[RMDB]
RNA sequence: GGGAACGACUCGAGUAGAGUCGAAAAAGCUCAUGGUACGCCAUGAGCAACCGGAAGCCCUGGCAGGGUGCGCACCGGAUAAAGCGGCCCUACCUCACCGGCACAGCGUGCAUUACGAGGCACGCAAAAAACGCAGAACGCUUCGGCGUUCUGCGAAGAUUAUAUGACACUUCGGUGUCAUAUAAUCAAAAGAAACAACAACAACAAC
Reactivity to 2A3 in 0.01 (KOAc 150mM, MgCl2 10mM, bicine 150mM(pH8.5), 24C), signal-to-noise 1, nucleotides 027 to 156: a000g010c000u030c000a010u010g000g020u040a040c250g100c070c000a000u010g000a000g000c000a000a000c000c010g040g000a080a000g000c000c010c050u020g020g000c050a040g010g020g010u190g300c000g000c000a090c090c100g070g040a160u300a100a160a010g010c000g000g000c000c000c000u000a010c010c000u020c020a040c000c010g020g000c060a060c100a060g000c000g000u020g020c030a060u070u220a180c150g050a090g070g050c000a000c000g020c000a010a010a010a010a010a000c020g000c000a060g000a000a000c010g000c020u000u190c200g070g000c010g000u000u030c000u080g000c000g010a060a000